[RMDB]
RNA sequence: GGGAACGACUCGAGUAGAGUCGAAAAAGUGGGUGGUACAGGAUGAUUUGACAACUUAAGGAUAACAUGCAAGCCAUAGUUGCACCCUAUUACUGGGAAGUGUCUAGUGUGCUGGCAAAACCAGGAGCACCAAUCAGUACCCAAGUUAUAAAAAAUACCAUUUACUAGGUUUCGACCUAGUAAAUGGAAAAGAAACAACAACAACAAC
Reactivity to DMS in 0.01 (KOAc 150mM, MgCl2 10mM, bicine 150mM(pH8.5), 24C), signal-to-noise 3, nucleotides 027 to 156: a100g010u000g000g010g030u000g010g020u000a100c070a140g000g010a090u000g010a130u000u000u000g010a110c050a070a080c070u010u000a060a140g020g010a150u000a050a110c090a120u000g010c060a060a090g010c040c050a090u030a090g020u000u000g030c010a140c000c020c010u000a070u000u000a120c080u000g000g040g000a110a120g030u010g070u010c040u000a070g040u000g020u000g040c000u000g020g020c020a040a080a080a300c010c020a060g000g000a080g010c030a020c010c030a040a090u020c050a020g000u010a050c030c000c000a020a260g000u010u000a090u020a010a080a060a090a030a070u000a140
Reactivity to 2A3 in 0.01 (KOAc 150mM, MgCl2 10mM, bicine 150mM(pH8.5), 24C), signal-to-noise 6, nucleotides 027 to 156: a010g100u100g010g040g010u060g020g000u060a040c050a050g080g030a090u090g050a070u070u080u090g060a050c070a090a020c080u110u130a090a030g050g000a040u070a180a100c070a090u140g040c060a060a060g040c020c010a060u050a050g040u020u060g030c020a030c000c000c010u030a080u090u100a040c040u030g000g010g010a100a100g080u020g000u050c030u030a050g050u010g030u030g100c010u020g030g000c030a020a030a010a100c010c000a020g000g040a030g000c010a000c010c010a020a060u100c010a010g040u040a050c000c010c020a030a030g020u090u060a120u150a040a070a030a040a020a020u230a090
Record summary: Chemical mapping of a 207-nucleotide RNA with DMS and 2A3. High 2A3 reactivity points to a flexible backbone, as in loops and unpaired stretches. The 2A3 profile rests on 4,160 reads. It was measured as part of the RMDB library OK3TST. For DMS, 4,655 sequencing reads were counted. The reactions ran in a buffer of 150 mM KOAc, 10 mM MgCl2 and 150 mM bicine (pH 8.5), at 24 C. Reactivities are given for positions 27 through 156.